Source: RMDB library M2RFPK, as collected in RNAgym.
An RNA of 207 nucleotides, treated with 2A3 and DMS and read out base by base.
For 2A3 the reverse transcriptase was SuperScript II with manganese.
Reactivities are given for positions 27 through 156.
For DMS the reverse transcriptase was MarathonRT.
[RMDB]
RNA sequence: GGGAACGACUCGAGUAGAGUCGAAAAGGUCAGGCCUGAUCGGAAAUAGCAGCAGGUGAGUCCGCCUUAUGUGAAGGAUCGGCUGAAACACGAGGAAAUACUGAGCCAACGCAAGACGGUAGCCGAAAAAAUCUAGUUCACUUCGGUGAACUAGAAACAGACUAUGAUGGUUCGCCAUCAUAGUCUGAAAAGAAACAACAACAACAAC
Reactivity to 2A3 in 0.01 (KOAc 150mM, MgCl2 10mM, bicine 150mM(pH8.5), 24C), signal-to-noise 4, nucleotides 027 to 156: g030g020u020c010a000g020g080c000c030u130g000a070u030c050g070g090a080a120a060u070a050g060c040a000g010c000a000g000g030u030g030a060g050u030c040c020g000c020c000u100u080a090u070g100u020g040a040a030g020g020a020u050c030g010g000c020u040g040a110a090a020c060a010c070g030a060g020g090a040a080a050u160a090c070u090g020a030g020c010c020a030a040c060g010c050a020a020g030a010c040g030g000u050a010g000c030c030g000a080a010a010a000a000a020u000c000u000a000g000u000u000c000a000c000u020u010c150g070g000u000g000a000a000c000u000a000g000a000a000a000
Reactivity to DMS in 0.01 (KOAc 150mM, MgCl2 10mM, bicine 150mM(pH8.5), 24C), signal-to-noise 2, nucleotides 027 to 156: g010g020u010c040a110g000g000c010c010u000g000a050u010c050g030g010a040a060a100u000a150g000c010a070g030c120a000g020g020u000g010a110g000u000c020c030g030c020c010u010u020a050u040g010u000g010a140a140g020g000a090u000c060g010g020c030u020g000a120a100a060c050a130c040g020a140g020g010a070a060a110u000a060c070u020g000a100g030c010c020a040a120c040g030c050a040a110g010a120c030g000g070u010a080g010c000c040g020a000a020a100a070a040a120u000c010u000a020g000u010u000c000a010c010u000u000c300g020g000u000g030a000a010c000u010a000g000a010a050a120